[RMDB]
Chemical mapping of a 177-nucleotide RNA with DMS and 2A3. High 2A3 reactivity points to a flexible backbone, as in loops and unpaired stretches. It was measured as part of the RMDB libraries RFM100 and RFMREP. DMS adducts were read by reverse transcription with MarathonRT. For 2A3 the reverse transcriptase was SuperScript II with manganese. The RNA was probed in 150 mM KOAc, 10 mM MgCl2 and 150 mM bicine (pH 8.5) at 24 C.

RNA sequence: GGGAACGACUCGAGUAGAGUCGAAAAGUCAGAGAUGUGUUGUGCGUGUGUGUGGCGUGAUCGCUCACCAAGUAUUUAGCGGGAUUCUACCCUGUUCGUUCCGCCCGCGCGUGAUCGCGAUUGUGUCACCUAAGUAACAAUUCGUUGUUACUUAGGUAAAAGAAACAACAACAACAAC
Reactivity to DMS in 0.01 (KOAc 150mM, MgCl2 10mM, bicine 150mM(pH8.5), 24C), signal-to-noise 9, nucleotides 027 to 126: g010u010c080a080g010a110g010a070u010g010u010g010u000u000g020u000g010c080g020u010g010u010g020u000g010u010g010g010c030g020u010g010a070u010c050g010c020u000c030a040c030c080a070a090g010u010a060u020u010u010a100g010c060g010g000g000a070u010u000c020u000a040c010c010c030u000g000u010u010c000g010u000u000c000c000g010c060c040c030g010c020g000c080g000u020g010a070u020c090g010c020g000a110u010u000g010u010g000u000c090
Reactivity to 2A3 in 0.01 (KOAc 150mM, MgCl2 10mM, bicine 150mM(pH8.5), 24C), signal-to-noise 9, nucleotides 027 to 126: g110u080c060a020g030a010g020a170u110g070u020g020u130u050g030u040g050c060g020u070g010u020g010u010g030u060g060g010c020g020u050g050a070u090c010g000c010u020c010a030c010c020a070a040g060u070a130u130u230u130a040g030c040g020g070g000a020u040u010c010u030a050c000c010c020u040g060u070u020c000g000u000u000c000c010g040c010c010c010g020c000g000c020g030u070g060a090u120c050g000c010g010a010u020u120g070u020g030u040c010